[RMDB]
RNA sequence: GGGAACGACUCGAGUAGAGUCGAAAACAUCGGUGAAGCCGUCGGCAUCGUGGCCGCCCAGUCCAUCGGCGAACCCGGCACCCAGCUGACCAUGCGCACCUUCCACCAGGGUGGCGUCGGUGAGGACAAUGUAGCAAGAUUUCGAUCUUGCUACAUUAAAAGAAACAACAACAACAAC
Reactivity to DMS in 0.01 (KOAc 150mM, MgCl2 10mM, bicine 150mM(pH8.5), 24C), signal-to-noise 9, nucleotides 027 to 126: c140a100u010c050g020g010u010g010a180a190g010c020c040g030u000c060g010g010c050a090u010c140g030u010g000g010c030c030g000c040c030c040a130g010u000c040c040a090u010c020g010g010c020g010a110a160c160c010c020g010g020c110a140c020c010c020a170g010c040u000g010a060c030c050a080u000g010c020g010c030a050c020c010u000u000c050c060a080c120c100a090g000g000g010u000g010g000c020g010u000c130g020g000u000g010a080g010g000a090c100
Reactivity to 2A3 in 0.01 (KOAc 150mM, MgCl2 10mM, bicine 150mM(pH8.5), 24C), signal-to-noise 6, nucleotides 027 to 126: c020a060u110c020g020g000u070g070a130a000g030c020c010g040u050c060g040g000c010a060u110c160g100u130g140g000c020c020g030c010c020c000a010g050u050c040c020a080u050c020g010g000c000g010a030a030c000c020c000g010g000c010a050c000c010c000a030g030c020u040g030a030c000c020a070u130g010c110g020c020a020c010c000u100u100c060c030a110c030c020a040g020g030g020u020g060g020c020g010u020c080g000g030u040g050a050g030g030a040c030

Structure probing data (DMS and 2A3) for a 177-nucleotide construct. 2A3 is a SHAPE reagent: it acylates the 2'-hydroxyl of flexible nucleotides of all four kinds. Source: RMDB library OK2TRN, as collected in RNAgym. Reactivities are given for positions 27 through 126. The reactions ran in a buffer of 150 mM KOAc, 10 mM MgCl2 and 150 mM bicine (pH 8.5), at 24 C.